[RMDB]
RNA sequence: GGGAACGACUCGAGUAGAGUCGAAAAGCGCGCGGGACGGCGCCCGGGCAGUGGAAUGCGCUCGGCGAUGCUGCUCAGCGGGUUGACCACCAUGGUAAGUGCGAUCACAGCGUCUUGCAGCGUCGCGCUCAGGCUUAUUGUUCGCAAUAAGCCUGAGAAAAGAAACAACAACAACAAC
Reactivity to DMS in 0.01 (KOAc 150mM, MgCl2 10mM, bicine 150mM(pH8.5), 24C), signal-to-noise 3, nucleotides 027 to 126: g010c060g010c030g020c000g020g010g010a090c080g010g010c050g010c040c020c040g000g010g010c040a090g070u010g000g010a120a080u000g020c080g010c040u010c060g010g020c050g020a060u000g000c000u000g000c010u000c110a100g010c010g000g010g010u010u000g020a070c070c010a020c050c060a130u010g020g010u010a090a130g000u010g000c070g000a080u000c040a060c080a130g020c020g020u010c100u000u000g010c020a050g000c050g020u000c000g000c030g030
Reactivity to 2A3 in 0.01 (KOAc 150mM, MgCl2 10mM, bicine 150mM(pH8.5), 24C), signal-to-noise 2, nucleotides 027 to 126: g020c030g000c000g010c000g060g030g070a070c040g040g030c000g030c000c030c010g000g020g000c080a110g020u070g090g260a170a110u190g030c020g020c070u010c000g040g020c020g010a010u040g000c030u020g000c000u000c110a000g020c000g060g070g000u060u050g010a040c000c020a000c010c050a140u260g070g090u260a170a130g000u010g070c040g000a080u000c010a020c030a060g100c020g010u030c050u090u100g000c020a000g010c010g010u010c000g000c000g010
Background
An RNA of 177 nucleotides, treated with DMS and 2A3 and read out base by base. For DMS, 3,067 sequencing reads were counted. Conditions: 150 mM KOAc, 10 mM MgCl2 and 150 mM bicine (pH 8.5), 24 C. For 2A3, 2,284 sequencing reads were counted.